[RMDB]
RNA sequence: GGGAACGACUCGAGUAGAGUCGAAAAGUCUUUGAAAUCUGAUGAUGGCAGAACAACACUGCCACUGGCCUUGAGGAUACUGGCCCUGCAUUGCCAUCAAGUAUCUGCAGAAAUUGAAGAUGGCUGGUCAUUGGACCGGGUUCGCCCGGUCCAAUGAAAAAGAAACAACAACAACAAC
Reactivity to DMS in 0.01 (KOAc 150mM, MgCl2 10mM, bicine 150mM(pH8.5), 24C), signal-to-noise 1, nucleotides 027 to 126: g010u000c000u000u010u010g020a090a120a300u000c020u000g000a120u000g000a080u020g000g010c020a000g010a100a100c110a160a080c250a090c060u000g010c010c070a040c190u000g030g040c090c030u000u000g030a220g000g030a140u010a030c100u050g000g000c080c080c130u000g000c050a040u000u010g000c020c000a050u030c150a160a070g000u000a030u020c040u000g000c010a010g000a110a000a270u010u010g010a030a040g000a060u000g090g010c080u000g010g060
The data come from the RNA Mapping Database (RMDB), library OK2TRN. This 177-nucleotide RNA was probed chemically with DMS. DMS adducts were read by reverse transcription with MarathonRT.